[RMDB]
RNA sequence: GGGAACGACUCGAGUAGAGUCGAAAAGGCUUAUGGGAAUUGGAAUUGCAUUGGCUACUAGUAACAGACACCUGACACAGCAGCUUAAGUCAAGAAUUCUGGAAUUCACCUGUUGCUGUCUUCAGUGGAAGCGUAUGUGUUUCGACACAUACGCUUCAAAAGAAACAACAACAACAAC
Reactivity to DMS in 0.01 (KOAc 150mM, MgCl2 10mM, bicine 150mM(pH8.5), 24C), signal-to-noise 2, nucleotides 027 to 126: g010g000c050u000u000a040u010g030g010g000a030a100u010u030g000g000a030a050u010u000g010c110a070u000u020g000g020c010u000a010c080u010a100g020u000a080a070c100a130g000a180c180a100c100c030u030g010a100c300a050c080a080g030c100a030g010c050u010u010a120a070g020u000c130a070a060g000a010a020u000u000c130u010g020g010a030a100u000u000c040a100c060c030u000g000u000u010g000c020u010g000u000c090u000u000c090a100g000u030g010